This 207-nucleotide RNA was probed chemically with 2A3. Reactivities are given for positions 27 through 156.

RNA sequence: GGGAACGACUCGAGUAGAGUCGAAAAGGGGUCCUUUCAGUCCUUGGAUUUAUAAGACUUUUGACGAGCUGAAGCCUCCACGGCUCGAUAAGUCUUAUUGUCAGGACGAAAGGACGGAGGCACCCAAAAUCAGUUGGUAGUUCGCUACCAACUGAAAGAUUUGAGGGAGGUUCGCCUCCCUCAAAUCAAAAGAAACAACAACAACAAC
Reactivity to 2A3 in 0.01 (KOAc 150mM, MgCl2 10mM, bicine 150mM(pH8.5), 24C), signal-to-noise 2, nucleotides 027 to 156: g110g000g030g000u010c010c020u000u010u000c040a040g010u000c010c070u170u260g160g040a180u200u300u130a090u070a020a000g010a010c010u040u050u220u220g140a100c100g000a000g000c000u000g000a070a000g050c000c010u090c000c030a010c010g000g010c000u010c010g000a010u050a140a040g000u010c010u000u050a080u030u100g110u120c050a040g010g000a000c010g000a000a000a010g010g000a000c000g000g000a030g000g020c030a020c010c000c000a060a170a000a050u020c000a010g010u000u020g010g010u000a010g040u060u070c240g030c080u010a000c000c010a020a000c000u000g000a000a010a000